[RMDB]
RNA sequence: GGGAACGACUCGAGUAGAGUCGAAAAAUCAUUUUUUACAAUAGUGUUAACCUGGGAGCAGUAGAUGACUAUGUAAUAAACAUUUUACUUAACUCUUUAAGGGGUUUCAACGUUCAAAACGAUUGCACAUUGCAGGAGUUUUCGAACUCCUGCAAUGAAAAGAAACAACAACAACAAC
Reactivity to 2A3 in 0.01 (KOAc 150mM, MgCl2 10mM, bicine 150mM(pH8.5), 24C), signal-to-noise 4, nucleotides 027 to 126: a010u040c010a010u030u040u020u060u100u070a080c080a110a090u040a220g040u000g050u110u080a050a020c010c010u030g000g020g010a030g030c010a010g020u040a030g010a040u020g030a040c050u130a110u250g050u120a070a110u120a130a180a050c010a000u030u010u030u020a010c000u010u010a030a010c010u000c000u070u060u180a090a050g020g020g000g010u070u090u030c020a030a010c040g020u030u040c100a050a050a030a010c040g050a110u020u110g000c050a070
Reactivity to DMS in 0.01 (KOAc 150mM, MgCl2 10mM, bicine 150mM(pH8.5), 24C), signal-to-noise 2, nucleotides 027 to 126: a020u020c060a010u020u030u010u000u010u040a010c110a040a140u020a090g000u000g000u000u020a000a140c030c000u030g000g030g040a020g020c060a020g000u000a020g010a000u000g020a040c150u010a100u050g030u080a050a030u010a140a120a120c050a030u000u010u010u000a000c020u000u020a040a110c010u000c000u040u000u020a120a020g000g010g010g010u000u000u020c020a040a050c070g000u000u000c060a020a000a030a000c040g000a040u000u000g000c160a180
An RNA of 177 nucleotides, treated with 2A3 and DMS and read out base by base. For DMS the reverse transcriptase was MarathonRT.